An RNA of 177 nucleotides, treated with 2A3 and DMS and read out base by base. The RNA was probed in 150 mM KOAc, 10 mM MgCl2 and 150 mM bicine (pH 8.5) at 24 C. Values cover nucleotides 27 to 126.
[RMDB]
RNA sequence: GGGAACGACUCGAGUAGAGUCGAAAAGUGGAGGCCUGUUAGGGUUGGUGUCUUUCAACACCCUCCCGUGACCUACGUGUAGGGGUGAAAGGCCCAUCGAACCGGGCAACAGCUGGUUCCAACCGAAGUCACGCUAAUGGUUCGCCAUUAGCGUGACAAAAGAAACAACAACAACAAC
Reactivity to 2A3 in 0.01 (KOAc 150mM, MgCl2 10mM, bicine 150mM(pH8.5), 24C), signal-to-noise 2, nucleotides 027 to 126: g040u060g000g140a130g070g000c000c010u000g010u050u040a180g000g190g000u030u010g000g000u190g000u140c000u050u020u000c010a080a040c010a210c030c000c020u020c000c030c000g030u040g160a300c010c080u120a000c000g040u110g000u100a000g000g000g000g020u010g030a000a000a000g000g000c020c000c000a000u000c020g000a020a000c000c060g000g000g100c070a080a060c000a040g040c000u110g030g000u030u000c000c000a040a000c030c020g070a210a000
Reactivity to DMS in 0.01 (KOAc 150mM, MgCl2 10mM, bicine 150mM(pH8.5), 24C), signal-to-noise 2, nucleotides 027 to 126: g000u020g000g020a140g020g040c000c000u000g000u000u020a180g030g000g000u000u000g020g000u050g020u000c000u010u000u000c000a000a070c050a140c000c000c000u000c050c100c000g030u020g020a140c230c100u070a030c050g000u000g000u010a010g070g000g030g020u000g000a010a090a010g000g000c000c000c030a020u000c000g000a040a050c300c010g030g000g000c010a020a060c130a300g000c020u000g000g020u000u000c000c010a070a250c110c070g010a090a140
For 2A3, 853 sequencing reads were counted. 2A3 adducts were read by reverse transcription with SuperScript II with manganese. For DMS the reverse transcriptase was MarathonRT.